Structure probing data (DMS and 2A3) for a 177-nucleotide construct. The reactions ran in a buffer of 150 mM KOAc, 10 mM MgCl2 and 150 mM bicine (pH 8.5), at 24 C. Reactivities are given for positions 27 through 126. Values are in units of 0.01, from 0 to 300, in steps of 10. 2A3 adducts were read by reverse transcription with SuperScript II with manganese.
RNA sequence: GGGAACGACUCGAGUAGAGUCGAAAAAGCUAUUACGAUAGCAAUAAGCUGAGCCAGCCGCCCGCCACAAUCCCGGUCAAGUCCUAUUGACCGGAGAUUGUCCAGUGGUGGCUAAGAGCAGUGACAAUUACGCCCUGUUUUUCGAAACAGGGCGUAAAAAAGAAACAACAACAACAAC
Reactivity to DMS in 0.01 (KOAc 150mM, MgCl2 10mM, bicine 150mM(pH8.5), 24C), signal-to-noise 2, nucleotides 027 to 126: a110g000c000u020a000u000u000a130c170g000a020u000a000g040c020a120a130u000a070a180g000c030u000g010a040g000c090c100a150g000c020c020g030c020c000c030g000c270c300a050c000a000a000u000c000c000c000g000g030u000c000a000a030g000u100c130c160u120a170u010u050g000a030c000c010g000g010a000g000a010u000u000g000u000c220c170a130g040u080g030g030u000g000g000c000u000a020a100g010a100g000c000a010g020u000g010a130c190a100a120
Reactivity to 2A3 in 0.01 (KOAc 150mM, MgCl2 10mM, bicine 150mM(pH8.5), 24C), signal-to-noise 2, nucleotides 027 to 126: a000g010c030u000a010u020u020a010c120g090a050u040a030g000c010a030a080u280a140a020g070c010u010g000a000g050c010c110a000g010c020c000g020c000c000c000g050c010c000a000c010a030a000u010c000c000c000g000g000u000c000a000a000g150u210c000c100u150a170u080u040g030a020c000c020g010g000a000g000a000u000u000g010u020c000c100a070g000u130g030g000u010g000g010c000u000a000a020g010a040g000c000a010g020u000g050a030c080a050a150